RNA sequence: GGGAACGACUCGAGUAGAGUCGAAAAGGCGGGUCUUUAAGGGCACUGGGUAUCAAUCGGGAUCUACGGGAAGGGAUAAACUAGUAACAUGCUUUGGGCAAGGGAACUAUUUAAGGGCGUAGGGCGGUAGCUAGUCUACUUUCGAGUAGACUAGCUAAAAAGAAACAACAACAACAAC
Reactivity to DMS in 0.01 (KOAc 150mM, MgCl2 10mM, bicine 150mM(pH8.5), 24C), signal-to-noise 2, nucleotides 027 to 126: g000g030c110g010g000g020u010c090u010u010u020a060a140g020g000g010c130a070c060u010g030g000g020u020a090u010c060a110a080u000c150g000g000g020a050u000c060u000a100c100g000g000g010a110a110g000g020g010a130u010a070a050a090c150u000a040g030u000a060a150c100a070u000g020c060u000u010u000g000g000g000c120a060a070g000g000g000a050a080c150u000a080u000u000u010a080a100g020g000g030c070g000u000a080g000g010g000c060g000g030
Reactivity to 2A3 in 0.01 (KOAc 150mM, MgCl2 10mM, bicine 150mM(pH8.5), 24C), signal-to-noise 2, nucleotides 027 to 126: g070g020c070g000g000g050u060c080u080u190u140a030a030g000g030g030c090a030c090u060g010g020g030u030a060u170c090a030a100u140c050g000g020g040a020u050c070u120a100c080g020g040g060a070a020g030g000g020a000u030a040a110a030c060u010a030g050u030a050a030c000a090u120g050c080u100u150u120g070g050g000c010a020a030g000g000g040a010a070c000u000a060u120u120u020a060a030g030g010g000c140g020u060a050g040g000g000c020g010g000